RNA sequence: GGGAACGACUCGAGUAGAGUCGAAAAGAUAUGGACCAUGCUUCGCGAUAAGCGUGUCUCGGAAACGAGAUAACGCUUUUGACGCGAAACAUGGUCCUAAGUCAAAAGCCAUAGUUCGCUAUGGCAAGUAGUAGUUAGGCUUCGGCCUAACUACUACAAAAGAAACAACAACAACAAC
Reactivity to DMS in 0.01 (KOAc 150mM, MgCl2 10mM, bicine 150mM(pH8.5), 24C), signal-to-noise 2, nucleotides 027 to 126: g000a050u000a180u010g020g000a000c000c000a010u000g000c020u000u000c000g010c020g020a270u000a020a000g000c000g030u000g010u010c000u000c020g010g000a070a040a190c000g020a010g010a020u000a040a040c000g010c000u010u000u000u010g020a240c130g000c010g000a000a010a020c040a010u000g000g010u010c000c010u000a000a070g010u030c020a170a120a110a150g000c000c010a020u000a010g010u010u030c260g030c010u000a010u010g000g000c020a040a060
Reactivity to 2A3 in 0.01 (KOAc 150mM, MgCl2 10mM, bicine 150mM(pH8.5), 24C), signal-to-noise 2, nucleotides 027 to 126: g020a000u040a020u090g010g000a000c000c000a020u010g010c010u030u020c010g020c050g220a120u090a300a000g010c000g010u000g000u010c000u000c000g020g020a060a050a040c020g000a010g020a040u040a160a040c010g020c010u100u020u050u160g120a060c150g000c020g000a000a000a010c010a000u000g010g000u000c000c000u000a010a000g010u010c000a000a020a030a080g000c000c000a010u010a000g060u050u080c300g010c200u010a000u000g000g010c000a020a000
This 177-nucleotide RNA was probed chemically with DMS and 2A3. For DMS the reverse transcriptase was MarathonRT. The 2A3 profile rests on 4,412 reads. The data come from the RNA Mapping Database (RMDB), library TTRDES.